[RMDB]
RNA sequence: GGGAACGACUCGAGUAGAGUCGAAAACUCAAUGUAGGGAAUAACAUUGAAUUGAUACAAAUACCUUCUUCGGUGUAGGGAAAAACACCGAAUUGAUACAAAUACCUUUCUCAAUGUAGGGAAUAACAAAACAGGCAUCGCUUCGGCGAUGCCUGAAGGAAUACGCUACCUUCGGGUAGCGUAUUCCAAAAGAAACAACAACAACAAC
Reactivity to 2A3 in 0.01 (KOAc 150mM, MgCl2 10mM, bicine 150mM(pH8.5), 24C), signal-to-noise 1, nucleotides 027 to 156: c010u000c020a020a050u070g000u060a140g000g050g050a080a160u150a060a020c030a010u030u030g020a070a090u100u200g070a150u140a180c040a010a160a050u140a070c000c010u040u090c000u050u020c000g010g000u010g000u000a080g000g010g060a040a040a040a000a000c000a000c000c000g000a010a000u060u050g020a000u020a140c030a060a080a010u090a050c000c010u010u050u030c010u020c030a030a060u170g010u090a030g060g020g030a010a010u080a100a050c120a020a050a010a050c020a000g000g030c000a000u000c000g000c010u060u200c240g070g000c000g000a000u000g000c000c000u000g000a000a000